RNA sequence: GGGAACGACUCGAGUAGAGUCGAAAAGUAAUAGAUAACUGGAUGCAGCGUACGCGUCAACGCAUAUCCAGUACGAAUGGUACCUGUAAAUAAAAUAUGGCGCGUAGUACAAGUACCAACAGAAGGAUAAGCGAUGGUGAUGUCAAUCACAUUUGCACGCAUGAGUAAUAUUCGUAUUACUCAUGCGAAAAGAAACAACAACAACAAC
Reactivity to 2A3 in 0.01 (KOAc 150mM, MgCl2 10mM, bicine 150mM(pH8.5), 24C), signal-to-noise 6, nucleotides 027 to 156: g060u070a040a190u060a120g110a080u100a110a070c000u010g010g010a010u040g110c210a090g000c140g000u000a010c000g000c000g010u000c000a020a010c000g010c010a030u030a010u190c010c000a000g010u010a010c020g090a090a120u080g020g000u010a010c000c020u010g010u030a060a120a090u160a050a140a070a030u150a050u030g000g000c010g000c020g000u010a020g020u000a000c000a010a010g000u000a000c010c010a010a040c030a030g160a120a040g100g040a050u070a150a020g000c010g050a010u070g050g080u030g010a040u040g100u220c100a080a030u040c000a030c030a070u050u060u260g030c080a040
Reactivity to DMS in 0.01 (KOAc 150mM, MgCl2 10mM, bicine 150mM(pH8.5), 24C), signal-to-noise 3, nucleotides 027 to 156: g010u010a120a150u010a180g020a160u000a090a050c020u000g010g000a040u000g010c120a090g030c030g030u010a060c020g020c000g030u000c010a030a100c000g000c010a110u010a150u000c010c000a020g020u020a040c120g030a130a110u000g040g010u000a040c010c050u030g000u000a060a080a170u000a070a060a050a110u000a080u010g010g040c000g000c030g020u000a100g030u000a030c010a030a040g010u000a020c000c010a030a160c090a090g000a080a080g010g000a090u000a060a150g000c030g000a050u000g000g020u000g010a070u000g010u010c150a100a040u010c030a080c040a110u000u010u010g040c030a240